An RNA of 207 nucleotides, treated with 2A3 and read out base by base. 2A3 adducts were read by reverse transcription with SuperScript II with manganese.
[RMDB]
RNA sequence: GGGAACGACUCGAGUAGAGUCGAAAAGGCAGUAGACUUCAAGUAUGUGUUGGGUAGGGAAGCCCACGGCUCAUUCCCAAAGAAGUGGUGCAGUCUGGCAUCCUAUAAAGGGCACGACUCCCCUAUUUGAUGUUGCCCCAGCAGUGAUGGGGAAGCAAGUCCUGCUGGUAUUCGUACCAGCAGGACUAAAAGAAACAACAACAACAAC
Reactivity to 2A3 in 0.01 (KOAc 150mM, MgCl2 10mM, bicine 150mM(pH8.5), 24C), signal-to-noise 1, nucleotides 027 to 156: g100g000c060a020g000u020a060g110a210c060u230u030c190a200a160g000u040a110u190g090u000g000u070u080g080g000g010u030a030g000g000g030a060a000g030c020c020c000a000c010g050g000c000u110c040a050u020u000c000c000c000a050a050a000g000a150a000g000u040g030g030u110g000c030a000g040u000c040u120g070g020c010a150u050c000c000u030a030u050a150a000a130g060g000g000c090a010c090g100a050c000u070c000c010c000c050u000a160u030u120u170g240a170u050g020u070u100g000c000c000c000c000a000g040c020a000g050u100g140a220u030g000g010g040g030a010a000g060c180a010